[RMDB]
RNA sequence: GGGAACGACUCGAGUAGAGUCGAAAAUAGAUUAAUGCAGAACUUUCUGACAUGGGUUCCAACUACUGAAGGUAUUAUCAGUAUACUAGACUGUGGGUUAAAGGACUUCUAUGAAUCCUUGGUUGCACUAUUUGGCAACACCACUUUAGCUGAUACAGACUUACGUUUUUUUCGAAAAACGUAAGUCAAAAGAAACAACAACAACAAC
Reactivity to DMS in 0.01 (KOAc 150mM, MgCl2 10mM, bicine 150mM(pH8.5), 24C), signal-to-noise 2, nucleotides 027 to 156: u000a130g000a230u000u010a080a120u010g000c070a060g000a090a130c050u000u000u010c020u000g010a160c090a070u010g000g020g020u000u000c010c030a110a170c070u000a030c100u010g010a100a110g020g010u000a060u010u000a040u000c050a020g000u020a110u010a050c080u000a090g010a070c070u010g000u000g000g030g010u000u020a060a040a110g010g020a080c040u010u010c120u000a170u020g020a030a070u000c010c000u000u000g010g060u000u000g000c000a080c170u000a130u010u000u000g040g010c000a040a050c040a230c030c020a060c060u000u000u000a080g020c020u020g010a110u000a060c080a260
Reactivity to 2A3 in 0.01 (KOAc 150mM, MgCl2 10mM, bicine 150mM(pH8.5), 24C), signal-to-noise 4, nucleotides 027 to 156: u150a020g060a030u090u150a080a010u100g000c020a020g100a240a230c070u100u170u050c030u050g090a100c020a050u050g080g000g000u060u010c020c020a080a030c030u180a010c030u080g050a080a020g080g000u060a070u110u020a020u090c000a000g020u020a030u020a110c050u050a030g030a120c020u020g010u000g010g030g040u060u180a080a040a010g010g000a020c040u070u020c050u170a120u170g090a070a040u030c010c000u010u010g050g000u020u010g010c020a040c150u170a240u240u110u200g050g000c000a000a000c000a030c020c010a000c000u020u030u010a030g000c000u010g000a000u000a080c030a040
The data come from the RNA Mapping Database (RMDB), library OK3TST. An RNA of 207 nucleotides, treated with DMS and 2A3 and read out base by base. For 2A3, 2,384 sequencing reads were counted. For DMS the reverse transcriptase was MarathonRT.